Chemical mapping of a 177-nucleotide RNA with DMS. The data come from the RNA Mapping Database (RMDB), library OK2TST. Reactivities are rounded to 0.1 and cut off at 0 and 3. Conditions: 150 mM KOAc, 10 mM MgCl2 and 150 mM bicine (pH 8.5), 24 C.

[RMDB]
RNA sequence: GGGAACGACUCGAGUAGAGUCGAAAAAACCGGAUCUGCCCCUGACGGCCCACCGCGUGGGCGACCCGGCCACGCAGAUGAUGGAUGCGGUCAUCGGCCAGCAGCGCUUCCUGCACGGUCGCCGAGAUGGCUCCUUAAUCUUCGGAUUAAGGAGCCAAAAAGAAACAACAACAACAAC
Reactivity to DMS in 0.01 (KOAc 150mM, MgCl2 10mM, bicine 150mM(pH8.5), 24C), signal-to-noise 1, nucleotides 027 to 126: a080a130c030c030g000g000a060u000c000u000g030c000c000c030c060u000g000a100c160g000g020c060c030c070a090c150c090g000c060g030u010g000g040g010c010g010a020c060c020c080g010g000c020c040a060c150g020c030a120g000a040u040g000a090u020g010g010a100u000g020c080g020g000u000c120a040u010c060g010g000c000c110a100g020c040a060g010c160g000c070u000u000c070c000u010g000c040a120c090g020g000u000c050g000c020c120g010a100g030a110